An RNA of 177 nucleotides, treated with 2A3 and DMS and read out base by base. 2A3 adducts were read by reverse transcription with SuperScript II with manganese. DMS adducts were read by reverse transcription with MarathonRT. Reactivities are given for positions 27 through 126. The DMS profile rests on 1,389 reads.

RNA sequence: GGGAACGACUCGAGUAGAGUCGAAAAUCCUUCCUUUUCGAAGGAAGGACAGUGCACAGUCUUCGCAUCUGUGAAUCACACAACAGCCGUGUCUAUCCGAGGUUUUAAUCAAGUUCGCUUGAUUAAAUAGUGAACGAUUGUUCGCAAUCGUUCACUAAAAAGAAACAACAACAACAAC
Reactivity to 2A3 in 0.01 (KOAc 150mM, MgCl2 10mM, bicine 150mM(pH8.5), 24C), signal-to-noise 1, nucleotides 027 to 126: u030c010c000u000u020c010c010u070u000u080u090c190g120a020a020g010g000a010a010g010g000a010c010a040g060u110g000c000a010c010a060g030u000c050u140u170c170g000c070a060u020c030u040g030u010g100a140a050u130c040a030c000a000c030a000a080c040a030g080c060c030g050u030g010u050c040u000a110u070c030c000g080a050g000g070u050u060u020u060a000a000u000c020a050a010g000u040u060c140g100c060u000u020g000a000u000u040a020a020a000
Reactivity to DMS in 0.01 (KOAc 150mM, MgCl2 10mM, bicine 150mM(pH8.5), 24C), signal-to-noise 2, nucleotides 027 to 126: u000c000c000u000u000c000c000u000u000u020u020c180g030a020a000g000g000a010a020g000g000a000c110a060g020u000g000c040a070c030a020g010u010c030u000u000c140g000c110a070u000c030u000g010u000g000a090a050u000c080a120c050a070c050a080a120c150a110g000c030c020g020u000g010u000c050u000a130u010c010c030g020a130g030g010u000u010u000u000a000a010u010c020a000a020g010u000u010c230g030c000u000u000g000a000u000u000a010a010a060